RNA sequence: GGGAACGACUCGAGUAGAGUCGAAAAAAGAAUAUUGGCAGGUGGUUAUUGCCCAGGUAAGACAUCAUACCUGGAUGAAGCUGCAUAUUGCAACCACCUAGAUGUGUUGCGAGUGCUAAGUCGCACACCAUCAGACCAAGUUCGCUUGGUCUGAUGGAAAAGAAACAACAACAACAAC
Reactivity to DMS in 0.01 (KOAc 150mM, MgCl2 10mM, bicine 150mM(pH8.5), 24C), signal-to-noise 3, nucleotides 027 to 126: a080a090g000a120a060u010a070u000u000g010g040c110a080g000g000u000g000g020u000u000a100u010u000g010c070c010c000a020g000g000u000a020a050g010a140c230a110u010c120a140u000a000c010c000u000g000g000a040u000g010a030a110g000c140u000g010c020a130u010a070u000u020g020c020a080a050c010c000a010c030c060u000a070g000a060u000g000u000g010u010u000g020c010g000a050g000u010g010c100u000a040a090g020u000c090g020c040a020c120a140
Reactivity to 2A3 in 0.01 (KOAc 150mM, MgCl2 10mM, bicine 150mM(pH8.5), 24C), signal-to-noise 3, nucleotides 027 to 126: a000a030g120a060a070u150a040u160u060g110g000c050a010g010g000u010g000g040u070u060a090u180u180g020c010c000c000a010g000g020u060a070a040g150a100c050a080u190c010a040u080a010c010c000u010g010g000a010u040g050a050a050g070c070u080g000c030a050u110a190u240u250g030c000a000a000c000c000a000c000c000u000a020g040a080u080g040u010g020u120u030g000c020g020a010g000u040g050c050u120a160a060g040u050c020g000c010a010c000a000
An RNA of 177 nucleotides, treated with DMS and 2A3 and read out base by base. It was measured as part of the RMDB library OK2TST. The RNA was probed in 150 mM KOAc, 10 mM MgCl2 and 150 mM bicine (pH 8.5) at 24 C. For DMS the reverse transcriptase was MarathonRT. 2A3 is a SHAPE reagent: it acylates the 2'-hydroxyl of flexible nucleotides of all four kinds. The DMS profile rests on 3,304 reads.